The data come from the RNA Mapping Database (RMDB), library OK1LIB. The record gives the reactivity of an RNA of 177 nucleotides to 2A3 and DMS. For 2A3 the reverse transcriptase was SuperScript II with manganese.
RNA sequence: GGGAACGACUCGAGUAGAGUCGAAAAUAAAAUUUAUUCAAACAACCAUCACGCAUCCAAAGCCCUGUUUCGUGCGAGCGUCGUCAAUAUAUCCAAUCCAGAUGACGAUCACGUUUUACUGAUGGGACAUAAGCUGACUCUUCGGAGUCAGCUUAUGAAAAGAAACAACAACAACAAC
Reactivity to 2A3 in 0.01 (KOAc 150mM, MgCl2 10mM, bicine 150mM(pH8.5), 24C), signal-to-noise 4, nucleotides 027 to 126: u150a000a110a040a080u150u150u150a210u180u130c130a080a110a050c010a050a070c050c010a010u010c010a000c080g030c020a040u070c070c070a020a090a220g000c010c000c000u040g090u030u060u020c030g010u020g030c070g090a020g060c000g010u000c000g010u000c050a180a020u110a030u020a020u240c100c040a090a000u000c020c040a070g020a070u030g010a010c000g000a040u190c030a010c050g000u000u000u040u150a060c030u030g000a050u090g010g020g020a000
Reactivity to DMS in 0.01 (KOAc 150mM, MgCl2 10mM, bicine 150mM(pH8.5), 24C), signal-to-noise 2, nucleotides 027 to 126: u060a070a060a090a200u050u030u060a000u000u020c120a060a100a120c140a020a080c030c030a000u010c010a080c190g010c090a020u030c040c040a050a130a060g000c000c010c000u010g000u010u000u010c030g010u000g010c050g000a120g000c040g020u000c050g020u000c050a050a120u030a100u050a040u000c110c160a050a060u010c100c110a120g040a050u010g000a010c050g050a030u030c050a020c060g020u000u010u020u040a130c140u000g000a050u010g000g000g040a150
For DMS the reverse transcriptase was MarathonRT. For 2A3, 1,872 sequencing reads were counted. High DMS reactivity at an A or C suggests that its Watson-Crick edge is free. For DMS, 2,817 sequencing reads were counted. The RNA was probed in 150 mM KOAc, 10 mM MgCl2 and 150 mM bicine (pH 8.5) at 24 C. Values are in units of 0.01, from 0 to 300, in steps of 10. Reactivities are given for positions 27 through 126.